[RMDB]
RNA sequence: GGGAACGACUCGAGUAGAGUCGAAAAAACAACCACAUGUUCACUGGCACCGUGUCCUUAUGCUUGAACUUGACGAAUGGACUUUUGUAUGAGGUGAACAAAAAGAGACACUAAAAGAAGUAGCAGAAGGAAGUUGCAAAAAGAGUAUGAGCCCGCACCAUCAUCCUGACUUCGGUCAGGAUGAUGGAAAAGAAACAACAACAACAAC
Reactivity to 2A3 in 0.01 (KOAc 150mM, MgCl2 10mM, bicine 150mM(pH8.5), 24C), signal-to-noise 3, nucleotides 027 to 156: a000a000c080a020a020c040c020a030c020a060u070g020u030u020c030a030c130u120g060g000c030a030c040c070g050u050g040u080c030c020u110u140a120u150g040c030u020u060g040a080a050c000u020u100g040a050c080g050a080a090u150g040g030a010c000u000u020u030u000g010u000a010u020g000a010g030g030u050g080a100a020c060a020a080a010a030a020g060a000g010a020c020a000c080u170a110a080a030a050g030a000a020g020u020a000g000c010a000g000a000a000g040g000a000a020g020u080u110g040c070a010a040a020a000a040g020a020g030u060a110u050g010a010g020c000c000c010g010c020a030
Reactivity to DMS in 0.01 (KOAc 150mM, MgCl2 10mM, bicine 150mM(pH8.5), 24C), signal-to-noise 1, nucleotides 027 to 156: a040a030c000a070a170c020c000a040c010a020u010g000u010u000c010a120c170u000g080g020c030a090c070c120g020u010g010u000c030c090u000u010a110u010g010c040u000u000g010a050a040c060u000u010g000a140c030g000a090a150u010g010g020a030c020u000u000u000u000g010u000a020u010g000a000g040g000u020g030a070a180c090a050a020a110a110a130g000a080g030a040c030a100c080u010a070a050a030a060g040a020a040g000u000a040g010c020a010g040a050a080g010g020a040a110g010u000u000g000c050a000a080a020a030a060g010a110g020u000a110u000g020a150g000c000c010c000g000c010a190
This 207-nucleotide RNA was probed chemically with 2A3 and DMS. 2A3 adducts were read by reverse transcription with SuperScript II with manganese. For DMS, 1,953 sequencing reads were counted.